[RMDB]
RNA sequence: GGGAACGACUCGAGUAGAGUCGAAAAAGAAUUGUACCACGACUGCGUAUCCUAAACGGGCUCUGCAGUGGUUAUUCUUGUAAAGUACUAGGAGUGAAUAGUGGCCCGUAUUGCAGGCAUUAACAUUAAAAGGCAAUCCACUUCGGUGGAUUGCCAACUUACUGUUUCACUUCGGUGAAACAGUAAGAAAAGAAACAACAACAACAAC
Reactivity to DMS in 0.01 (KOAc 150mM, MgCl2 10mM, bicine 150mM(pH8.5), 24C), signal-to-noise 1, nucleotides 027 to 156: a030g010a000a010u010u010g020u000a070c040c020a090c040g080a090c030u020g000c000g010u000a170u000c010c030u010a040a120a130c120g000g020g060c040u000c010u000g010c030a130g010u000g000g000u000u010a040u010u010c020u000u030g020u000a100a090a130g020u000a030c020u000a040g000g020a070g010u010g000a080a070u020a060g050u010g010g000c000c010c020g020u000a120u000u010g000c050a050g000g000c010a120u000u020a070a100c080a090u010u020a020a100a080a120g030g010c000a000a020u000c000c000a030c010u010u020c300g050g010u000g000g010a000u000u000g000c000c000a000a000
Reactivity to 2A3 in 0.01 (KOAc 150mM, MgCl2 10mM, bicine 150mM(pH8.5), 24C), signal-to-noise 1, nucleotides 027 to 156: a000g060a010a080u060u030g110u100a060c020c030a010c050g110a040c100u070g000c040g030u070a070u150c010c040u090a100a070a070c060g020g000g020c010u030c090u250g000c040a030g000u040g000g000u050u030a080u020u020c000u020u070g060u080a020a080a080g090u010a050c020u040a010g130g050a070g020u080g110a140a080u050a040g040u060g080g000c090c000c000g030u030a140u060u130g030c030a030g000g040c040a070u180u210a200a000c020a030u220u300a000a090a060a000g000g020c020a000a010u060c000c000a000c010u050u010c180g040g000u020g000g000a000u000u000g000c000c000a000a000